[RMDB]
RNA sequence: GGGAACGACUCGAGUAGAGUCGAAAACUCAAUAUUAGGACAAUUACUUUGGAAUGAAGAUGUCCCCAGCUUACCUUGACAGCUGUGAAUAUUCAUUAGCCAGGCUAAUGCCAAUAAACUGGAUAGAUCCGUGCCUUCAGUUCGCUGAAGGCACGGAAAAAGAAACAACAACAACAAC
Reactivity to 2A3 in 0.01 (KOAc 150mM, MgCl2 10mM, bicine 150mM(pH8.5), 24C), signal-to-noise 1, nucleotides 027 to 126: c050u010c050a000a000u300a120u120u100a050g000g000a020c070a000a180u200u060a180c060u110u000u000g030g070a030a130u080g000a000a130g040a100u130g000u000c000c000c000c020a000g000c000u050u120a050c040c000u130u060g120a040c020a070g000c010u000g000u000g000a000a000u000a050u220u070c050a000u000u140a000g000c000c000a000g010g150c050u000a140a000u070g010c040c040a120a000u080a060a060a000c070u020g080g030a060u070a180g050a010

Overview:
Structure probing data (2A3) for a 177-nucleotide construct. The reactions ran in a buffer of 150 mM KOAc, 10 mM MgCl2 and 150 mM bicine (pH 8.5), at 24 C. It was measured as part of the RMDB library OK1LIB. The 2A3 profile rests on 466 reads.